[RMDB]
RNA sequence: GGGAACGACUCGAGUAGAGUCGAAAACAACAGGUCGGUCGUCAAAGCGAUAGAUCCGUGGCGGACCUGUUGCCGUUGAUGCGGUCGGAAUGGACGGGUACACGGAUUGCCGCGCUGAAGGAUAGCGCCACGCGAGCGAGUUCGCUCGCUCGCGUGGAAAAGAAACAACAACAACAAC
Reactivity to 2A3 in 0.01 (KOAc 150mM, MgCl2 10mM, bicine 150mM(pH8.5), 24C), signal-to-noise 2, nucleotides 027 to 126: c050a010a000c010a020g060g010u060c000g050g070u010c030g000u000c020a010a270a000g070c030g120a050u100a140g060a050u020c050c060g020u030g050g150c020g150g000a010c000c050u000g000u000u000g080c000c070g060u150u220g210a270u290g050c070g000g040u070c090g050g060a200a230u110g020g000a020c000g000g000g000u020a000c000a000c010g000g090a040u020u150g100c020c040g020c040g040c000u130g070a070a030g210g050a050u050a240g080c000g000
An RNA of 177 nucleotides, treated with 2A3 and read out base by base. Reactivities are given for positions 27 through 126. Source: RMDB library OK1LIB, as collected in RNAgym. For 2A3, 520 sequencing reads were counted.